[RMDB]
RNA sequence: GGGAACGACUCGAGUAGAGUCGAAAAACUGACGGUACGCCGUCAGAACGGUAGAAAAGAUGGUUUGAAAAACACGCCUUCUACCAAUAUAGUAAAUAAAUAGGCGGAGCGGUCAUACGUGACCGCAAAAACAUCCUUGGCUUCGGCCAAGGAUGAAGAAACAGAAAACGUUCGCGUUUUCUGUUUCAAAAGAAACAACAACAACAAC
Reactivity to 2A3 in 0.01 (KOAc 150mM, MgCl2 10mM, bicine 150mM(pH8.5), 24C), signal-to-noise 1, nucleotides 027 to 156: a000c000u000g010a000c000g000g000u040a020c150g020c050c000g000u020c000a010g010a090a010c030g000g010u000a000g030a000a010a020a040g090a140u130g010g010u010u050u120g060a070a080a010a000a000c000a010c010g000c010c000u000u010c000u010a010c000c000a020a000u160a020u020a040g040u040a020a050a160u030a100a050a030u040a040g000g000c040g010g000a040g010c020g000g000u000c000a020u050a120c200g030u030g000a000c000c000g000c010a000a000a000a000a000c000a000u000c000c000u000u000g010g000c000u010u020c150g080g000c020c000a000a000g000g000a000u000g010a000a000

This 207-nucleotide RNA was probed chemically with 2A3. Conditions: 150 mM KOAc, 10 mM MgCl2 and 150 mM bicine (pH 8.5), 24 C. It was measured as part of the RMDB library M2RFOK.